[RMDB]
RNA sequence: GGGAACGACUCGAGUAGAGUCGAAAAAGAUAGAGCGUGUGAUUCUUUGGAAACAGCAAAGGAUGGUUUAUCUGAUCUGAAAGACAGUAUUGAUGAAAUCAUUUCUUCACUGGAAGAUGCAGCACAGGGAGUAAUCAAAGUUCGCUUUGAUUACUCCAAAAGAAACAACAACAACAAC
Reactivity to 2A3 in 0.01 (KOAc 150mM, MgCl2 10mM, bicine 150mM(pH8.5), 24C), signal-to-noise 2, nucleotides 027 to 126: a040g140a040u140a000g070a010g110c110g000u040g030u030g030a100u050u040c020u030u030u090g080g040a110a100a000c020a020g030c060a050a000a000g010g000a010u010g000g100u000u020u050a020u010c020u010g060a070u000c000u000g070a190a100a080g150a030c000a000g070u060a050u040u110g020a020u040g100a020a020a020u030c010a010u010u050u080c000u000u010c020a030c030u020g000g020a020a010g020a030u050g040c100a020g000c010a020c010a030g000
Reactivity to DMS in 0.01 (KOAc 150mM, MgCl2 10mM, bicine 150mM(pH8.5), 24C), signal-to-noise 2, nucleotides 027 to 126: a050g010a100u000a050g000a110g010c040g020u010g030u010g020a130u010u000c010u000u010u000g030g030a060a090a270c060a020g010c070a100a030a050g010g010a000u000g000g000u000u000u000a060u010c020u000g010a060u000c010u000g000a110a110a110g010a100c030a010g010u000a060u000u000g010a040u000g000a040a030a050u000c020a020u000u010u000c000u000u000c200a110c060u000g000g000a040a020g010a060u010g020c110a100g040c050a050c120a130g010
Chemical mapping of a 177-nucleotide RNA with 2A3 and DMS.
The reactions ran in a buffer of 150 mM KOAc, 10 mM MgCl2 and 150 mM bicine (pH 8.5), at 24 C.
The DMS profile rests on 1,452 reads.
It was measured as part of the RMDB library RFMREP.
For 2A3, 1,636 sequencing reads were counted.